[RMDB]
RNA sequence: GGGAACGACUCGAGUAGAGUCGAAAACAUCUUCUAACUUGAUAUGCCAUUUGUCUUCUUGUUUAUCUAAAGUUUGAACUAAACCUUGAACCAAGCAAUCCUCUAAUUGAUAUUGUUUAGAAGCAUGUCGCUUCGUACCUUUCGAGGUACGAAGCGAAAAAGAAACAACAACAACAAC
Reactivity to 2A3 in 0.01 (KOAc 150mM, MgCl2 10mM, bicine 150mM(pH8.5), 24C), signal-to-noise 1, nucleotides 027 to 126: c060a010u010c000u000u000c010u010a000a010c040u010u080g090a060u060a000u170g100c060c000a030u000u000u130g050u030c000u020u000c000u020u270g230u120u030u060a210u060c090u090a000a220a000g030u000u030u140g080a180a210c040u010a180a000a050c000c000u020u050g010a100a030c060c050a010a000g020c030a160a050u060c000c010u130c080u080a050a080u100u060g010a080u030a080u140u030g030u000u120u000a010g000a000a000g060c100a020u120g030
Structure probing data (2A3) for a 177-nucleotide construct. The 2A3 profile rests on 762 reads. It was measured as part of the RMDB library OK1LIB.